This 207-nucleotide RNA was probed chemically with DMS and 2A3. The data come from the RNA Mapping Database (RMDB), library M2RFPK. Reactivities are given for positions 27 through 156. The 2A3 profile rests on 5,851 reads. The reactions ran in a buffer of 150 mM KOAc, 10 mM MgCl2 and 150 mM bicine (pH 8.5), at 24 C. The DMS profile rests on 10,923 reads. 2A3 adducts were read by reverse transcription with SuperScript II with manganese.
RNA sequence: GGGAACGACUCGAGUAGAGUCGAAAAGGCUGCGUAUCACUCUAGGGUACGUGAUAGUACGAUAUAAGAAGCACUGGUACAUGCCGGCAGGGACAGUUAAGAGAUGGCCGCAGUCUCGUGUCCCUGCAAAAGGAGUUCUCGUUCGCGAGAACUCCAACUAAAAGUACUACUUCGGUAGUACUUUUAGAAAAGAAACAACAACAACAAC
Reactivity to DMS in 0.01 (KOAc 150mM, MgCl2 10mM, bicine 150mM(pH8.5), 24C), signal-to-noise 4, nucleotides 027 to 156: g010g000c020u000g000c050g000u010a050u000c010a090c050u000c110u000a160g020g020g030u000a020c040g010u000g020a160u010a100g020u010a040c020g010a170u000a130u000a110a110g010a130a090g010c050a030c030u000g010g030u000a060c090a150u000g000c020c010g000g030c000a020g010g000g020a030c010a060g010u000u000a100a130g010a050g010a050u000g010g000c110c140g010c100a250g000u000c010u000c010g000u000g010u010c010c000c000u000g000c030a010a020a080a100g000g000a030g010u000u000c000u000c010g030u000u010c250g030c020g020a040g000a010a000c000u000c010c000a000a050
Reactivity to 2A3 in 0.01 (KOAc 150mM, MgCl2 10mM, bicine 150mM(pH8.5), 24C), signal-to-noise 6, nucleotides 027 to 156: g020g010c030u050g010c060g020u010a020u030c030a050c140u110c110u180a130g100g020g030u020a010c020g020u040g040a040u080a080g030u030a000c060g030a090u050a020u050a230a120g100a110a020g040c050a030c070u050g030g000u050a030c020a030u100g020c010c010g050g000c010a000g000g000g020a000c010a050g020u130u130a170a030g020a000g000a010u040g080g040c080c040g040c080a010g010u000c000u000c000g020u010g000u000c000c000c000u000g000c000a000a000a000a000g000g000a000g000u000u000c010u000c000g020u050u060c270g010c010g060a000g000a000a000c000u000c000c000a000a000